An RNA of 177 nucleotides, treated with DMS and 2A3 and read out base by base.
RNA sequence: GGGAACGACUCGAGUAGAGUCGAAAAUCGACUGUGAUCUCUGUCUCAUGGUGUGUAGACUAGAGUACGAUCGUGUAGAGUACAGUACGGAUCUAUGCUAGCGUAUCCAUGACAUGCUAGUCCAUGAGCGGGAGAGAACUUUCGAGUUCUCUCCCGCAAAAGAAACAACAACAACAAC
Reactivity to DMS in 0.01 (KOAc 150mM, MgCl2 10mM, bicine 150mM(pH8.5), 24C), signal-to-noise 2, nucleotides 027 to 126: u000c020g000a040c050u020g010u000g010a220u010c000u020c000u000g000u010c040u000c010a030u000g010g030u010g020u000g030u000a040g010a070c030u030a100g000a100g020u010a020c060g000a040u000c070g000u000g020u000a040g010a240g000u000a060c020a110g030u010a060c130g000g010a280u000c030u000a040u010g000c000u000a000g000c000g010u000a080u020c040c180a120u010g010a070c100a080u010g000c020u000a010g000u000c010c020a050u000g010a070
Reactivity to 2A3 in 0.01 (KOAc 150mM, MgCl2 10mM, bicine 150mM(pH8.5), 24C), signal-to-noise 2, nucleotides 027 to 126: u040c010g010a000c030u010g010u040g070a050u040c000u000c030u040g110u110c010u010c010a030u030g000g040u080g050u060g020u160a010g010a020c020u030a050g030a020g110u010a010c040g060a070u060c090g070u080g160u300a040g030a040g090u130a020c030a030g050u030a020c050g060g030a070u020c010u010a020u080g010c000u010a010g010c000g030u050a040u000c080c080a140u200g040a020c000a060u080g000c000u010a030g080u010c010c010a010u020g010a010
For DMS, 1,889 sequencing reads were counted. Values cover nucleotides 27 to 126. The data come from the RNA Mapping Database (RMDB), library OK2TRN. The RNA was probed in 150 mM KOAc, 10 mM MgCl2 and 150 mM bicine (pH 8.5) at 24 C.